Structure probing data (2A3 and DMS) for a 177-nucleotide construct. For 2A3 the reverse transcriptase was SuperScript II with manganese.

[RMDB]
RNA sequence: GGGAACGACUCGAGUAGAGUCGAAAAGCGUGCAACGACGCUGGUGGAAUUGUUCUGUUGACGGCGGAGGAGUAUGCUGCUGCUGGUUUUGGCAACGCUGGGCGCAUCGACGUUGCUGGAUGCGACAGAGGUUUUAAUAGUUCGCUAUUAAAACCUCAAAAGAAACAACAACAACAAC
Reactivity to 2A3 in 0.01 (KOAc 150mM, MgCl2 10mM, bicine 150mM(pH8.5), 24C), signal-to-noise 2, nucleotides 027 to 126: g010c010g020u030g000c010a030a010c010g050a010c020g020c030u040g020g070u120g050g070a120a120u110u120g050u190u050c050u050g120u100u100g080a060c020g000g010c030g020g010a040g010g010a030g040u070a060u100g030c030u030g020c010u010g000c020u040g120g000u040u090u150u140g060g000c020a040a020c040g030c050u060g020g130g000c020g000c020a020u020c010g050a030c010g030u040u020g000c010u010g070g000a010u050g020c000g010a000c010a040
Reactivity to DMS in 0.01 (KOAc 150mM, MgCl2 10mM, bicine 150mM(pH8.5), 24C), signal-to-noise 7, nucleotides 027 to 126: g010c010g020u000g000c020a040a080c050g010a110c020g020c010u010g010g040u000g000g020a090a150u010u010g010u000u000c050u000g010u000u000g010a100c080g000g010c050g010g000a120g010g010a170g020u010a060u010g010c030u000g010c040u000g010c020u010g010g020u000u000u000u000g010g000c040a050a050c100g000c070u010g000g010g000c030g010c040a030u010c020g000a100c050g000u000u000g000c010u000g010g010a040u000g000c020g000a080c130a120
The RNA was probed in 150 mM KOAc, 10 mM MgCl2 and 150 mM bicine (pH 8.5) at 24 C. For DMS the reverse transcriptase was MarathonRT. It was measured as part of the RMDB library OK2TST. For DMS, 20,370 sequencing reads were counted.